[RMDB]
This 177-nucleotide RNA was probed chemically with DMS. For DMS, 1,366 sequencing reads were counted. The reactions ran in a buffer of 150 mM KOAc, 10 mM MgCl2 and 150 mM bicine (pH 8.5), at 24 C. High DMS reactivity at an A or C suggests that its Watson-Crick edge is free.
RNA sequence: GGGAACGACUCGAGUAGAGUCGAAAAGAUAUGGACAAUACUUCUUGAUGACCUAUAGCCUCUCAAUCGGUACAUCGGAAACGAUGUACCGAUUGAUGCUAUAGCAAGAGAAGGUUGUCCUAAGUCAGUAUCGUUGUAUCUUCGGAUACAACGAUACAAAAGAAACAACAACAACAAC
Reactivity to DMS in 0.01 (KOAc 150mM, MgCl2 10mM, bicine 150mM(pH8.5), 24C), signal-to-noise 1, nucleotides 027 to 126: g000a010u000a300u000g000g010a010c000a000a010u000a190c000u000u000c000u000u000g000a180u000g000a070c300c010u000a000u000a000g000c000c000u000c020u000c020a010a000u000c000g000g000u000a000c000a020u000c000g000g000a140a110a170c000g020a020u000g010u000a000c000c020g000a000u000u000g020a000u030g010c000u010a000u000a000g000c060a090a130g000a030g000a020a020g000g000u000u010g000u010c000c000u000a030a040g000u000c030a150